[RMDB]
RNA sequence: GGGAACGACUCGAGUAGAGUCGAAAAAUAGAGAGUCUGGCAAAGAGCAUCUUUGAAGAACUUGGUACCAUAACUCUUGGAGGCUUAUUUCAAAUUCAAAAUAGUAAUUUCGGAACACAGAAAUAUGUCGUGCAAUGGAGUUCGCUCCAUUGCACGAAAAAGAAACAACAACAACAAC
Reactivity to 2A3 in 0.01 (KOAc 150mM, MgCl2 10mM, bicine 150mM(pH8.5), 24C), signal-to-noise 1, nucleotides 027 to 126: a000u070a000g020a000g000a000g090u000c110u070g000g130c000a040a050a000g000a050g000c040a180u040c230u180u180u080g200a200a180g050a100a100c020u000u000g070g010u140a040c000c000a130u090a240a030c080u000c000u000u000g020g000a000g040g010c040u040u090a140u000u100u040c110a090a060a010u090u080c090a000a000a060a260u070a040g210u090a180a150u050u000u140c060g180g000a060a180c140a000c000a250g040a050a030a010u080a040u210g000